[RMDB]
RNA sequence: GGGAACGACUCGAGUAGAGUCGAAAAGCGGUCCCGCAAGGCCAGCGGAUCCCCUUGCUGCGCGCCGGACUUCGCCGCCGUCAUGGCCGCCAGCGCUUGGUCCUGGCGCAGCACGGCGGGCAGGGUGACCAGCAUCCGUAUUCGUACGGAUGCUGGUAAAAGAAACAACAACAACAAC
Reactivity to 2A3 in 0.01 (KOAc 150mM, MgCl2 10mM, bicine 150mM(pH8.5), 24C), signal-to-noise 3, nucleotides 027 to 126: g050c040g010g020u030c050c000c020g000c060a040a020g080g000c000c020a020g000c030g080g010a120u090c020c030c000c000u010u090g010c020u030g000c070g010c000g020c010c070g080g000a050c000u040u030c090g050c060c000g000c020c000g060u100c090a260u210g050g040c060c040g030c010c000a080g000c070g040c090u140u240g070g000u130c000c000u030g000g000c000g000c000a000g010c020a000c010g020g030c040g010g040g000c000a050g020g040g000u060g080
Reactivity to DMS in 0.01 (KOAc 150mM, MgCl2 10mM, bicine 150mM(pH8.5), 24C), signal-to-noise 3, nucleotides 027 to 126: g010c050g000g000u060c030c020c020g020c230a130a120g040g020c030c010a140g000c010g000g010a140u020c030c020c020c060u020u020g000c040u000g020c060g000c020g000c000c040g000g000a030c030u010u010c070g020c010c020g010c010c050g020u000c120a180u070g000g050c060c100g000c060c010a080g000c140g000c060u080u020g030g000u020c040c020u000g000g000c010g010c060a040g010c170a020c050g000g000c010g000g010g020c010a080g030g010g040u010g010
Notes:
The record gives the reactivity of an RNA of 177 nucleotides to 2A3 and DMS. For 2A3, 2,392 sequencing reads were counted. Values cover nucleotides 27 to 126.